[RMDB]
RNA sequence: GGGAACGACUCGAGUAGAGUCGAAAAAUGGAAGGGGGACUCCGGGACACCUUGCAUGCUGGGGACGAAGCCGCCCCCGGGCGCUCCCCUCGAUACGCCUUCGAGGGGGUUCACACCUCCAGUCGGCCUAUCACAAACUGUUCGCAGUUUGUGAUAGAAAAGAAACAACAACAACAAC
Reactivity to DMS in 0.01 (KOAc 150mM, MgCl2 10mM, bicine 150mM(pH8.5), 24C), signal-to-noise 1, nucleotides 027 to 126: a060u000g000g000a090a040g000g000g000g020g000a130c040u000c040c080g000g010g000a210c070a050c010c050u020u010g000c010a030u000g000c010u020g030g000g050g010a010c070g010a040a130g020c140c000g010c070c010c000c090c130g010g000g010c020g010c090u010c000c000c030c000u010c000g000a030u010a120c200g010c120c150u010u000c000g000a050g000g000g010g030g010u000u000c120a160c250a140c050c000u000c010c020a060g010u010c100g020g000c100
Overview: The record gives the reactivity of an RNA of 177 nucleotides to DMS. For DMS, 819 sequencing reads were counted. DMS adducts were read by reverse transcription with MarathonRT. It was measured as part of the RMDB library 15KREP. In probing experiments dimethyl sulfate is read out at A N1 and C N3, which are open when not base-paired. Values cover nucleotides 27 to 126.